[RMDB]
RNA sequence: GGGAACGACUCGAGUAGAGUCGAAAAGCUACGCCUCGUACUACAAGGGUCCCGCCGAGCCCGAGGUGACGCUCAUUUGGGGCUCCAUGUACGACAACACCGCGACGGCCACGGAUGUGGUGCGUGACUUAAUGCGGGUAUUCGUACCCGCAUUAAGAAAAGAAACAACAACAACAAC
Reactivity to 2A3 in 0.01 (KOAc 150mM, MgCl2 10mM, bicine 150mM(pH8.5), 24C), signal-to-noise 6, nucleotides 027 to 126: g030c040u110a070c100g060c000c030u010c010g010u020a000c010u010a030c030a150a240g000g000g030u010c010c010c000g000c030c070g020a000g010c010c040c060g170a210g060g180u160g050a050c080g010c020u000c010a080u090u140u300g030g000g000g010c000u000c020c020a060u130g010u010a000c000g010a010c030a050a020c020a030c020c050g040c040g080a060c050g040g010c000c030a020c000g250g110a220u300g020u000g030g030u120g230c030g020u040g030a040
Reactivity to DMS in 0.01 (KOAc 150mM, MgCl2 10mM, bicine 150mM(pH8.5), 24C), signal-to-noise 5, nucleotides 027 to 126: g010c080u010a060c120g020c090c120u000c020g010u000a030c020u010a100c220a120a150g010g010g000u000c000c000c010g030c300c130g000a030g010c000c040c040g010a110g000g010u000g010a100c210g010c040u010c020a140u010u010u020g020g030g020g000c000u000c010c040a090u000g010u000a010c010g000a040c140a040a070c060a070c050c040g000c050g000a100c050g000g000c010c010a030c020g000g000a120u010g020u000g010g020u010g010c010g030u000g020a170
Structure probing data (2A3 and DMS) for a 177-nucleotide construct. Source: RMDB library OK2TRN, as collected in RNAgym. The reactions ran in a buffer of 150 mM KOAc, 10 mM MgCl2 and 150 mM bicine (pH 8.5), at 24 C.